[RMDB]
RNA sequence: GGGAACGACUCGAGUAGAGUCGAAAAGCCAGUGGAUCUACCAUUCUGGGGUCUGGAGGACAUUGGCCUUCCUCUCACAGCUCCACUAGGCAGUGCCCCAGUAGGGACUCUGUGUUGGGUCUCCAACCCGACAUUUCCCUUCCACACUGCCCUAGCACGUCAUCAUAGUCUUCGGACUAUGAUGACGAAAAGAAACAACAACAACAAC
Reactivity to 2A3 in 0.01 (KOAc 150mM, MgCl2 10mM, bicine 150mM(pH8.5), 24C), signal-to-noise 1, nucleotides 027 to 156: g000c000c010a000g060u010g080g160a300u060c030u180a300c020c000a010u100u020c000u010g020g000g000g000u050c120u090g000g000a000g000g010a000c000a000u000u000g000g010c000c000u030u020c000c000u040c010u180c050a230c060a110g090c090u110c080c040a060c040u010a010g020g000c000a000g010u000g000c000c000c000c000a010g010u020a000g000g000g000a000c080u100c230u300g020u000g000u070u010g000g000g000u040c120u070c160c000a010a000c010c000c000g010a000c000a010u070u020u020c010c000c030u010u030c080c000a020c010a010c020u070g020c000c070c000u000a010g020c020a010